Notes:
Chemical mapping of a 177-nucleotide RNA with DMS and 2A3. For DMS the reverse transcriptase was MarathonRT. Values cover nucleotides 27 to 126. The data come from the RNA Mapping Database (RMDB), library TTRDES. 2A3 adducts were read by reverse transcription with SuperScript II with manganese.
[RMDB]
RNA sequence: GGGAACGACUCGAGUAGAGUCGAAAAGAUAUGGAGUUAUGGUGAACUACCAGAUGCUGAUCGGAAACGAUCAGCUAAUCUGGCACUUUAACUCCUAAGUCAAAAUCAGUGUGUUCGCACACUGAAAGGUGUGUUUAAAGUUCGCUUUAAACACACCAAAAGAAACAACAACAACAAC
Reactivity to DMS in 0.01 (KOAc 150mM, MgCl2 10mM, bicine 150mM(pH8.5), 24C), signal-to-noise 4, nucleotides 027 to 126: g000a040u000a300u010g000g000a020g010u000u000a020u000g010g010u000g010a110a080c130u030a300c030c010a010g000a010u000g000c010u010g010a030u000c000g000g000a090a120a210c010g020a000u000c010a000g000c010u000a000a030u000c010u010g010g020c010a000c000u000u000u000a010a000c000u000c000c000u000a030a090g000u010c050a100a060a150a160u000c020a010g010u000g030u010g000u010u040c260g020c010a020c000a020c000u000g000a010a060a080
Reactivity to 2A3 in 0.01 (KOAc 150mM, MgCl2 10mM, bicine 150mM(pH8.5), 24C), signal-to-noise 4, nucleotides 027 to 126: g030a020u090a050u160g010g000a000g010u010u010a010u040g010g020u020g030a120a110c100u160a110c300c020a000g000a010u040g000c010u000g000a010u000c010g020g020a050a050a060c020g000a000u000c010a000g000c000u010a010a010u000c000u000g000g000c000a000c000u020u010u010a010a000c000u020c000c000u000a050a000g000u000c040a030a000a020a300u040c000a000g010u000g000u000g040u050u100c280g040c100a010c010a000c000u010g000a020a010a000